[RMDB]
Chemical mapping of a 177-nucleotide RNA with DMS. High DMS reactivity at an A or C suggests that its Watson-Crick edge is free. Reactivities are given for positions 27 through 126. The RNA was probed in 150 mM KOAc, 10 mM MgCl2 and 150 mM bicine (pH 8.5) at 24 C. For DMS the reverse transcriptase was MarathonRT.

RNA sequence: GGGAACGACUCGAGUAGAGUCGAAAAAGGAAAUUUUGCCUGGACAGUAUGACAUCUCUUUCAUCUCUACACCUGGAUUUCUACAUAGCGCGGUGCAGACAGUCGCCGAGAAGGUGCAACCACGGGGAACGGCAGUCUAAUUCGUUAGACUGCCGUUAAAAGAAACAACAACAACAAC
Reactivity to DMS in 0.01 (KOAc 150mM, MgCl2 10mM, bicine 150mM(pH8.5), 24C), signal-to-noise 1, nucleotides 027 to 126: a060g000g000a040a060a140u010u030u000u000g000c000c010u000g010g010a110c120a070g060u020a100u000g010a050c110a050u010c020u020c060u000u010u010c050a060u010c000u000c040u040a070c110a060c020c000u000g000g000a060u000u010u000c060u010a100c030a120u000a080g000c150g020c030g010g020u000g030c090a080g020a080c060a070g000u000c030g000c030c010g010a080g020a080a060g000g010u000g010c020a060a100c030c030a090c090g020g000g000g010